This 207-nucleotide RNA was probed chemically with 2A3. Conditions: 150 mM KOAc, 10 mM MgCl2 and 150 mM bicine (pH 8.5), 24 C. Reactivities are given for positions 27 through 156.

RNA sequence: GGGAACGACUCGAGUAGAGUCGAAAACGAGAGUGGCUCGAACCUCGUCGGCUACUGCUCGUGCGAGUUCACGGGACUCUUGCAUUUUGGUUAUCGGCACAUGGUCCAUGGUAGCUACUUCUCACUCUCAAAACGGCUCCGGAGCGCCGCGGGCGCGCGACACUGACGCUUUCGAGCGUCAGUGUCGAAAAGAAACAACAACAACAAC
Reactivity to 2A3 in 0.01 (KOAc 150mM, MgCl2 10mM, bicine 150mM(pH8.5), 24C), signal-to-noise 2, nucleotides 027 to 156: c130g000a010g000a000g000u030g030g020c050u050c130g050a040a040c010c030u030c030g000u040c030g000g010c010u230a190c170u290g030c070u100c070g020u000g020c020g040a110g010u070u050c070a060c140g070g000g020a010c030u080c000u170u040g040c040a110u040u120u140u220g160g000u140u160a050u160c050g060g020c010a060c040a100u210g010g000u030c030c020a030u050g070g030u050a020g010c010u030a040c030u190u120c000u010c020a060c020u030c000u000c000a090a160a050a060c030g080g000c020u020c040c050g040g000a060g000c030g030c030c030g120c050g040g050g010c060g000c000g030